Chemical mapping of a 177-nucleotide RNA with 2A3 and DMS. The reactions ran in a buffer of 150 mM KOAc, 10 mM MgCl2 and 150 mM bicine (pH 8.5), at 24 C.
[RMDB]
RNA sequence: GGGAACGACUCGAGUAGAGUCGAAAAGGACCAAACACUCAUUCCAAGGGGCAAACUUUCAUGAACAUCCUGGCGUUAGGAUCGGUGUCAAUGGGAUCACCUAUGAUAUAAGAAAACAAAUCCUAAGGUGCUACCAUACAUUCGUGUAUGGUAGCACAAAAGAAACAACAACAACAAC
Reactivity to 2A3 in 0.01 (KOAc 150mM, MgCl2 10mM, bicine 150mM(pH8.5), 24C), signal-to-noise 3, nucleotides 027 to 126: g050g020a020c010c010a000a040a030c080a010c020u100c050a100u110u000c020c000a110a080g000g000g060g010c030a090a100a010c100u120u140u120c060a070u190g020a050a020c010a020u070c000c000u040g120g000c130g060u100u070a080g000g000a070u030c030g050g000u010g010u030c010a000a070u080g010g000g040a020u100c010a060c050c000u050a080u090g090a040u030a020u040a140a030g110a090a100a040a000c110a040a110a000u030c050c010u090a040a050g130
Reactivity to DMS in 0.01 (KOAc 150mM, MgCl2 10mM, bicine 150mM(pH8.5), 24C), signal-to-noise 2, nucleotides 027 to 126: g090g000a000c000c020a010a100a130c090a090c090u010c020a050u000u010c040c080a100a090g020g050g000g010c000a080a120a100c060u000u080u040c090a020u000g070a060a070c070a100u040c000c030u030g000g000c080g010u000u000a030g000g010a130u000c120g030g000u000g000u050c100a120a110u020g030g000g000a100u000c130a050c030c000u000a190u070g000a050u040a110u030a020a240g000a060a000a040a000c260a080a040a080u010c020c000u050a010a290g000
For 2A3 the reverse transcriptase was SuperScript II with manganese.